[RMDB]
RNA sequence: GGGAACGACUCGAGUAGAGUCGAAAAUGCUGAGUAUAGAGUAAUUGCUUCUGCAUUUGCAUCUAUAGCUUUAGGUCUAAUAUUGGCUUUAGCUAAUAAGUCUAAAGUUGCAGUUUAGGUUCACUGAAUUAUGCAGGGUGUUCGCACCCUGCAUAAUAAAAGAAACAACAACAACAAC
Reactivity to DMS in 0.01 (KOAc 150mM, MgCl2 10mM, bicine 150mM(pH8.5), 24C), signal-to-noise 1, nucleotides 027 to 126: u020g010c030u030g000a130g030u020a000u000a000g000a050g010u020a020a000u010u000g010c000u020u070c300u010g010c010a010u010u000u000g050c000a120u010c000u000a000u000a000g020c000u000u000u000a000g000g000u030c020u000a050a080u000a020u010u010g000g000c000u000u070u020a150g020c020u000a000a010u010a030a060g010u010c000u000a000a010a000g010u010u040g020c000a000g000u010u010u020a080g000g000u000u000c090a080c030u010g010a170
Reactivity to 2A3 in 0.01 (KOAc 150mM, MgCl2 10mM, bicine 150mM(pH8.5), 24C), signal-to-noise 2, nucleotides 027 to 126: u150g000c030u020g020a040g120u070a010u000a000g040a050g020u090a010a070u050u000g000c000u130u300c200u300g030c010a010u020u000u000g010c010a170u000c020u030a020u030a020g000c000u030u000u030a000g040g040u060c020u080a100a030u040a200u070u010g010g000c030u080u250u220a020g000c000u020a020a020u020a130a000g040u000c000u000a010a000a000g040u080u060g030c020a010g000u000u060u150a160g050g010u040u040c070a080c100u090g060a120
This 177-nucleotide RNA was probed chemically with DMS and 2A3. For DMS, 3,005 sequencing reads were counted. For 2A3 the reverse transcriptase was SuperScript II with manganese. For 2A3, 952 sequencing reads were counted. The RNA was probed in 150 mM KOAc, 10 mM MgCl2 and 150 mM bicine (pH 8.5) at 24 C. The data come from the RNA Mapping Database (RMDB), library OK1LIB.